[RMDB]
RNA sequence: GGGAACGACUCGAGUAGAGUCGAAAAAGGUUGACGCGCUCAACACCGAGAAAUACGAAGCGGUGCCGAUCCGGCAGCACCUGGCGAGCCUGAACAAGCCCAAGGCGCCCAGCAUCGAAGGCAAGGACCUUCCACAUGUGUUCGCACAUGUGGAAGGAAAAGAAACAACAACAACAAC
Reactivity to DMS in 0.01 (KOAc 150mM, MgCl2 10mM, bicine 150mM(pH8.5), 24C), signal-to-noise 1, nucleotides 027 to 126: a070g000g010u000u000g090a070c080g010c090g000c080u110c020a050a090c020a120c000c020g030a080g010a210a050a150u000a220c220g040a110a050g020c100g020g000u000g000c080c070g000a090u010c060c020g000g010c000a020g020c020a090c140c000u000g000g000c000g020a070g000c050c050u020g000a140a110c050a180a120g000c000c000c000a070a060g030g000c020g000c000c000c000a180g000c120a050u000c060g000a100a090g000g010c020a140a130g010g000a180
This 177-nucleotide RNA was probed chemically with DMS. For DMS the reverse transcriptase was MarathonRT. The RNA was probed in 150 mM KOAc, 10 mM MgCl2 and 150 mM bicine (pH 8.5) at 24 C.